[RMDB]
RNA sequence: GGGAACGACUCGAGUAGAGUCGAAAAUCAUUCAGUCGCUUCCCGGGAAACCAAAGCUUUUGGGCUCCGGGGGAAGAAUGGUUGCAAAGCUGAAACUUAAAGGAAUUGACGGAAGGGUACCACCAGGCAUAUCUAAUGAGUUCGCUCAUUAGAUAUGAAAAGAAACAACAACAACAAC
Reactivity to DMS in 0.01 (KOAc 150mM, MgCl2 10mM, bicine 150mM(pH8.5), 24C), signal-to-noise 6, nucleotides 027 to 126: u000c020a030u000u000c010a090g010u000c130g020c120u000u010c000c000c000g000g010g000a050a070a120c010c020a020a030a190g010c250u010u010u000u000g000g000g000c150u000c010c010g000g020g010g010g010a060a050g000a040a030u000g010g010u000u010g010c120a060a070a100g010c040u000g000a070a070a100c080u000u010a060a100a100g000g000a070a090u000u010g010a060c070g000g000a060a040g010g000g010u000a060c060c040a090c080c050a080g000g010
Reactivity to 2A3 in 0.01 (KOAc 150mM, MgCl2 10mM, bicine 150mM(pH8.5), 24C), signal-to-noise 4, nucleotides 027 to 126: u030c000a000u010u030c010a010g210u100c040g040c130u160u070c000c000c000g000g020g010a130a060a020c030c010a040a030a070g300c080u150u110u090u040g010g010g010c020u000c020c000g060g000g030g010g010a010a030g010a030a030u050g020g000u040u030g050c040a060a040a060g030c030u110g070a070a050a040c040u090u110a130a030a070g060g020a070a070u080u080g020a030c030g000g010a050a020g070g000g000u030a020c000c020a020c020c010a020g070g000

An RNA of 177 nucleotides, treated with DMS and 2A3 and read out base by base. The reactions ran in a buffer of 150 mM KOAc, 10 mM MgCl2 and 150 mM bicine (pH 8.5), at 24 C. Reactivities are given for positions 27 through 126. The DMS profile rests on 7,287 reads. For 2A3 the reverse transcriptase was SuperScript II with manganese.